[RMDB]
RNA sequence: GGGAACGACUCGAGUAGAGUCGAAAAAGUGGGCUACGCGCGGUGGCUCACACCUGUAAUCCCAGCACUUUUGGGAUGCUGAGGCGGGCGGAUUACCUAAGGUCAGGAGUUCGAGACCAGCCUGGCUAACAUAGUGAAACCCCAUCUCUACUAAAAACAGUAUUACCCUCUUCGGAGGGUAAUACUGAAAAGAAACAACAACAACAAC
Reactivity to 2A3 in 0.01 (KOAc 150mM, MgCl2 10mM, bicine 150mM(pH8.5), 24C), signal-to-noise 1, nucleotides 027 to 156: a000g050u040g000g000g000c000u020a000c030g130c030g180c300g240g010u020g000g010c000u010c000a000c000a000c000c000u020g030u060a040a050u000c000c030c010a010g000c040a030c110u060u030u170u030g000g000g010a000u040g000c030u070g050a010g000g020c020g000g010g000c060g060g000a020u000u170a110c000c010u030a130a050g040g000u030c010a000g010g010a070g000u120u080c060g030a040g040a100c010c000a010g010c000c000u010g020g040c000u000a060a020c050a030u150a000g010u010g060a040a020a050c000c030c000c030a070u040c010u000c000u040a040c050u070a040a030a090a050a020